[RMDB]
RNA sequence: GGGAACGACUCGAGUAGAGUCGAAAAUAUGGCUGCAUCAGUGUACUUUCUGUCAGCAUGCAUUUUUGAAGAUGCUGGUAAUCAGGAGUACAAUGUAACAGGUACGGAUAAGUACAGCCUCUUGCAGUCGUCAUCGUUGUUUCGACAACGAUGACGAAAAAGAAACAACAACAACAAC
Reactivity to 2A3 in 0.01 (KOAc 150mM, MgCl2 10mM, bicine 150mM(pH8.5), 24C), signal-to-noise 1, nucleotides 027 to 126: u240a090u090g010g000c010u020g000c010a000u060c040a000g050u000g030u010a000c000u050u150u270c010u010g050u040c010a010g020c000a030u080g050c000a060u020u190u170u160u130g140a120a060g020a060u000g030c000u010g020g060u080a050a080u130c000a000g000g010a000g000u000a010c010a000a000u020g000u020a010a010c010a120g080g040u070a040c020g060g080a230u140a300a050g010u040a000c030a000g090c010c000u020c000u000u020g010c060a020g040
Reactivity to DMS in 0.01 (KOAc 150mM, MgCl2 10mM, bicine 150mM(pH8.5), 24C), signal-to-noise 1, nucleotides 027 to 126: u010a160u010g000g030c010u000g000c040a020u020c030a070g020u000g010u000a000c000u000u000u000c000u010g020u000c040a060g000c000a000u000g010c080a020u000u020u020u000u010g010a240a220g000a010u000g000c000u000g000g000u020a100a110u010c020a050g020g010a050g000u000a000c000a010a030u000g000u010a080a110c240a090g010g010u000a020c040g000g000a150u000a070a100g040u000a040c030a110g020c120c020u030c050u000u000g000c050a060g000
Structure probing data (2A3 and DMS) for a 177-nucleotide construct. The RNA was probed in 150 mM KOAc, 10 mM MgCl2 and 150 mM bicine (pH 8.5) at 24 C.